This 207-nucleotide RNA was probed chemically with DMS. It was measured as part of the RMDB library RNAMAK. Reactivities are given for positions 27 through 156. The RNA was probed in 150 mM KOAc, 10 mM MgCl2 and 150 mM bicine (pH 8.5) at 24 C.
RNA sequence: GGGAACGACUCGAGUAGAGUCGAAAACGUGUCCCUUUCGAGGGACACGAAAAAACCGUAGGCAGGCGUGUUAGCAACAGCAAUUGUUCGAAAGAGCAAUUGACAUGCUGGACACGCCUGCCUAAACGGAAAAAACAACCAGGUUCGCCUGGUUGAACAUUUGUAAUUACUUCGGUAAUUACAAAUGAAAAGAAACAACAACAACAAC
Reactivity to DMS in 0.01 (KOAc 150mM, MgCl2 10mM, bicine 150mM(pH8.5), 24C), signal-to-noise 2, nucleotides 027 to 156: c030g020u000g040u010c000c020c010u000u010u000c300g040a050g000g000g020a020c000a000c000g000a000a040a090a040a050a090c000c000g020u000a050g000g020c000a020g010g000c010g030u000g040u000u000a050g030c000a040a030c090a100g000c000a020a010u000u000g020u010u000c000g020a150a150a300g010a000g000c020a020a040u000u000g000a060c080a300u000g010c000u010g030g010a000c000a010c000g000c000c000u010g040c030c000u000a000a010a040c010g000g030a000a020a030a080a150a140c030a000a030c000c000a040g010g020u010u000c300g050c000c000u010g020g000u000u010g000a060a160